[RMDB]
RNA sequence: GGGAACGACUCGAGUAGAGUCGAAAAACCUUUCCCGAUGUGCCGCGAAUAGCGAUAGGUGUCUUCUGGACACCCAACAUCAUACAAUUGCAACGCACUCCGCUGCCUGUCAAGUACUGGCGGUGGAGAGUCUCCAUCAGUUCGCUGAUGGAGACUCAAAAGAAACAACAACAACAAC
Reactivity to 2A3 in 0.01 (KOAc 150mM, MgCl2 10mM, bicine 150mM(pH8.5), 24C), signal-to-noise 6, nucleotides 027 to 126: a000c020c000u020u020u010c010c010c000g010a100u040g020u050g040c020c040g030c020g050a150a130u080a130g020c020g020a040u080a030g000g010u000g000u000c010u170u090c200u300g110g000a000c000a010c000c000c000a060a030c020a010u020c010a020u080a180c080a100a160u100u120g070c050a110a040c080g000c050a020c030u000c000c000g010c010u000g000c010c010u020g000u030c070a230a120g040u070a140c010u010g000g000c000g000g000u010g000g000a010
Reactivity to DMS in 0.01 (KOAc 150mM, MgCl2 10mM, bicine 150mM(pH8.5), 24C), signal-to-noise 2, nucleotides 027 to 126: a050c020c030u020u010u010c000c000c020g040a040u020g010u000g050c100c010g000c110g060a130a050u040a210g020c060g000a180u020a200g000g020u000g000u000c000u040u050c300u030g030g010a010c000a000c000c040c160a090a050c110a030u020c000a070u000a060c190a100a150u010u050g000c050a050a220c200g040c050a200c020u000c010c000g050c000u000g000c000c000u000g000u000c050a160a130g010u020a020c000u000g000g000c000g020g030u000g000g010a000

Structure probing data (2A3 and DMS) for a 177-nucleotide construct. 2A3 adducts were read by reverse transcription with SuperScript II with manganese. Values are in units of 0.01, from 0 to 300, in steps of 10. The reactions ran in a buffer of 150 mM KOAc, 10 mM MgCl2 and 150 mM bicine (pH 8.5), at 24 C.